About this RNA:
The data come from the RNA Mapping Database (RMDB), library TTRDEL. This 177-nucleotide RNA was probed chemically with 2A3 and DMS. For DMS the reverse transcriptase was MarathonRT. For 2A3, 5,295 sequencing reads were counted. 2A3 adducts were read by reverse transcription with SuperScript II with manganese. Values are in units of 0.01, from 0 to 300, in steps of 10. 2A3 is a SHAPE reagent: it acylates the 2'-hydroxyl of flexible nucleotides of all four kinds.
RNA sequence: GGGAACGACUCGAGUAGAGUCGAAAAGAUAUGGAUCUGGGAGACGCUUCCCUACUUCGGAAACGAAGUAGCAGAACUACGUCUUUAGAUCCUAAGUCAAACCUUUCCCACUUCGGUGGGAAAGGAACGUUCUUCAUUACUUCGGUAAUGAAGAACGAAAAGAAACAACAACAACAAC
Reactivity to 2A3 in 0.01 (KOAc 150mM, MgCl2 10mM, bicine 150mM(pH8.5), 24C), signal-to-noise 2, nucleotides 027 to 126: g010a020u030a020u100g000g010a000u000c020u060g060g180g040a020g000a000c030g070c230u060u030c000c020c010u000a000c000u020u000c000g010g020a050a050a020c000g000a000a000g000u000a000g020c030a050g010a040a020c150u300a100c300g020u000c000u000u010u010a010g000a010u000c000c000u000a030a020g030u010c030a090a040a300c010c000u000u020u010c000c030c020a000c000u050u100c260g110g000u000g000g010g000a000a000a000g010g020a010a020
Reactivity to DMS in 0.01 (KOAc 150mM, MgCl2 10mM, bicine 150mM(pH8.5), 24C), signal-to-noise 2, nucleotides 027 to 126: g020a060u010a270u010g000g000a010u000c000u010g010g010g000a010g000a010c010g000c210u000u000c010c300c000u000a000c000u020u010c010g000g000a090a070a150c030g000a020a010g000u000a010g000c300a060g000a020a100c210u010a110c000g010u000c000u010u000u000a060g000a010u000c000c000u020a020a080g000u010c050a080a090a120c000c000u000u000u000c010c000c000a000c020u000u020c200g010g000u000g020g000g000a000a000a010g010g010a020a060